[RMDB]
RNA sequence: GGGAACGACUCGAGUAGAGUCGAAAAGACUAACAUCCUCCAUACUAUUCUGCCUAGCCAACACUAACUAUGAACGAGUACACAGCCGAACCAUAAUCCUGGCCCGAGGACUGCAAACACUCCUACCACUCAUAGCAACAUGAUGACUAGUAGCAAGGUAACAAGUCCUGUUCGCAGGACUUGUUACAAAAGAAACAACAACAACAAC
Reactivity to DMS in 0.01 (KOAc 150mM, MgCl2 10mM, bicine 150mM(pH8.5), 24C), signal-to-noise 1, nucleotides 027 to 156: g000a150c030u000a110a150c110a110u000c010c010u010c020c000a070u000a020c050u020a060u000u000c020u000g010c030c000u010a110g030c020c020a070a060c070a050c030u000a060a070c020u000a100u030g010a060a130c030g000a130g010u000a060c090a090c060a060g070c120c020g020a070a080c040c050a090u000a070a130u000c060c050u000g000g010c020c020c020g000a160g030g010a050c070u000g030c000a070a020a070c030a050c010u000c030c000u010a050c030c030a060c030u000c000a030u000a040g020c040a090a050c100a100u000g000a020u020g030a050c030u000a060g000u010a070g020c010a040a120g030
Reactivity to 2A3 in 0.01 (KOAc 150mM, MgCl2 10mM, bicine 150mM(pH8.5), 24C), signal-to-noise 4, nucleotides 027 to 156: g040a010c080u100a110a010c040a090u070c010c020u000c040c010a070u070a110c030u080a110u140u060c040u020g030c010c010u030a040g020c020c010a070a030c030a020c050u130a140a010c040u060a070u130g030a050a030c060g020a040g060u060a030c050a000c000a080g020c020c030g030a040a030c010c000a050u060a100a020u080c010c010u030g030g000c000c000c000g010a020g030g020a050c030u050g000c020a000a130a070c020a020c030u020c020c020u030a060c020c020a020c010u040c000a060u070a060g040c030a030a070c020a080u100g010a000u070g010a050c020u030a060g030u010a010g070c060a050a010g120